Chemical mapping of a 207-nucleotide RNA with DMS. For DMS, 1,427 sequencing reads were counted. It was measured as part of the RMDB library OK3TST. For DMS the reverse transcriptase was MarathonRT. The RNA was probed in 150 mM KOAc, 10 mM MgCl2 and 150 mM bicine (pH 8.5) at 24 C.
RNA sequence: GGGAACGACUCGAGUAGAGUCGAAAAGAAAGAUUAUUCCAGGCAGAGAACACCAUGAGCAAGGCUAAAUAACUACCAGGAAGAACUAAAAGAAUGCCAGUGGACAGAAUGUAGUGAAUAUGGAAGAGUGGUGAGAGAAAAGGGGUCAUAUCCUGCAGGAAAGGAAAGGUUUCGACCUUUCCUUUCCAAAAGAAACAACAACAACAAC
Reactivity to DMS in 0.01 (KOAc 150mM, MgCl2 10mM, bicine 150mM(pH8.5), 24C), signal-to-noise 1, nucleotides 027 to 156: g000a140a050a080g000a130u020u010a110u000u000c010c110a150g010g070c020a090g010a180g010a100a080c010a150c020c070a050u000g020a040g070c070a170a090g030g020c050u000a090a040a100u000a100a040c050u000a060c050c110a070g040g000a110a040g000a060a130c080u020a100a070a070a130g010a070a050u010g080c020c050a190g060u020g000g000a100c100a070g010a030a000u000g020u020a050g050u000g000a000a110u000a030u000g010g000a010a070g000a040g030u000g040g020u010g020a090g000a090g000a080a020a070a090g000g020g000g010u000c020a080u000a050u010c010c020u000g000c140a150